[RMDB]
RNA sequence: GGGAACGACUCGAGUAGAGUCGAAAAUGGUGAGCCAAGUUUGCUUAUCUAAGCACUUACUGCCACCAAGGUGGAUUAGAAUGAGAAGGAUUCUGUACACAGAGCAGAUGCAGUGAAGACGACCAGGCCUACUGAAUUUCUUCGGAAAUUCAGUAGGAAAAGAAACAACAACAACAAC
Reactivity to 2A3 in 0.01 (KOAc 150mM, MgCl2 10mM, bicine 150mM(pH8.5), 24C), signal-to-noise 3, nucleotides 027 to 126: u090g020g010u010g010a020g030c040c010a060a020g040u090u090u090g010c010u080u070a190u220c160u260a060a000g000c010a000c020u040u040a010c010u060g000c000c000a010c010c010a000a050g090g010u040g030g020a050u060u140a080g090a130a030u140g040a040g030a210a060g080g020a050u080u040c020u070g030u070a030c040a010c030a020g050a020g020c050a010g000a020u070g010c020a000g010u010g080a030a000g060a020c030g010a000c000c020a030g040g060
Reactivity to DMS in 0.01 (KOAc 150mM, MgCl2 10mM, bicine 150mM(pH8.5), 24C), signal-to-noise 4, nucleotides 027 to 126: u010g000g030u000g000a140g020c040c190a100a060g000u010u010u000g010c010u010u000a120u010c190u010a050a030g020c030a030c090u010u010a040c050u000g000c020c020a040c040c020a050a090g010g020u000g010g010a120u010u000a050g010a050a050u020g000a090g010a120a090g000g010a080u000u000c050u010g010u000a040c090a060c070a070g000a050g000c080a050g000a070u000g020c030a010g010u010g010a040a050g020a100c100g000a100c070c070a070g020g000